[RMDB]
Source information:
An RNA of 177 nucleotides, treated with DMS and 2A3 and read out base by base.
RNA sequence: GGGAACGACUCGAGUAGAGUCGAAAACUCUCUGCCAUGUGCAUUUUCUCGUUAUGUUUUCAAACAGAAUUGAAUAGUAUAUCAAUGCGAACAAAAAAUGUUCGAUUGCUGUUUGAAAAGUGUCGAGAGUAUAGGAUUAGUUCGCUAAUCCUAUACUAAAAGAAACAACAACAACAAC
Reactivity to DMS in 0.01 (KOAc 150mM, MgCl2 10mM, bicine 150mM(pH8.5), 24C), signal-to-noise 8, nucleotides 027 to 126: c140u000c020u010c050u010g010c010c030a120u010g010u030g010c020a070u010u010u010u010c000u000c010g010u000u010a040u010g010u000u000u000u000c000a010a000a000c000a010g000a110a040u000u000g000a030a040u000a100g010u020a090u020a100u030c090a060a070u010g010c050g010a030a050c080a010a040a110a060a090a110u010g000u000u000c000g010a040u000u010g010c000u000g000u000u000u000g000a000a000a010a070g010u000g000u000c010g000a020g010
Reactivity to 2A3 in 0.01 (KOAc 150mM, MgCl2 10mM, bicine 150mM(pH8.5), 24C), signal-to-noise 9, nucleotides 027 to 126: c010u010c000u000c030u020g010c020c040a210u220g120u130g050c050a060u110u070u130u030c010u000c010g030u060u110a080u130g300u020u010u000u000c000a000a000a000c000a010g030a070a060u050u050g040a050a050u100a120g180u120a090u040a040u220c050a060a050u130g200c030g040a030a020c050a050a140a040a060a020a070u090g000u000u000c000g000a010u000u060g110c000u000g000u000u000u000g000a000a000a000a000g050u040g040u020c000g000a000g000

It was measured as part of the RMDB libraries RFM100 and RFMREP.